Structure probing data (DMS and 2A3) for a 177-nucleotide construct.
RNA sequence: GGGAACGACUCGAGUAGAGUCGAAAACAGGGCAUCAGGAUAGCAGCCAAACUCAAGGCUUGGGACGAACUAAGUAUACGUUUCCCGCGUUCGCAAAAUGCGUUAUUCGCCGAAUUAGGCACAGCUAUGUACGUUACUCUUUCGAGAGUAACGUACAAAAAGAAACAACAACAACAAC
Reactivity to DMS in 0.01 (KOAc 150mM, MgCl2 10mM, bicine 150mM(pH8.5), 24C), signal-to-noise 4, nucleotides 027 to 126: c120a140g010g000g000c050a080u000c060a060g020g010a100u000a040g010c070a080g000c030c050a040a060a110c070u010c080a080a100g020g010c030u000u000g000g010g020a060c080g000a060a120c140u000a060a110g030u010a090u010a140c030g000u000u000u000c010c000c030g020c100g010u010u000c070g030c130a060a030a050a080u000g000c030g000u000u000a090u010u000c110g030c010c050g000a040a080u010u000a070g040g020c030a090c170a060g000c090u000a080
Reactivity to 2A3 in 0.01 (KOAc 150mM, MgCl2 10mM, bicine 150mM(pH8.5), 24C), signal-to-noise 3, nucleotides 027 to 126: c030a040g000g060g000c000a030u020c020a060g060g040a070u030a050g000c030a010g000c000c010a080a050a060c060u040c080a030a090g040g000c000u070u050g070g020g020a020c070g040a070a050c030u050a090a060g080u060a100u050a170c050g000u010u030u000c010c000c000g000c020g040u020u030c030g040c050a090a190a070a150u120g000c000g020u030u050a090u120u150c070g000c000c020g040a070a160u160u080a130g000g000c010a000c010a070g010c020u090a040

For DMS, 3,281 sequencing reads were counted.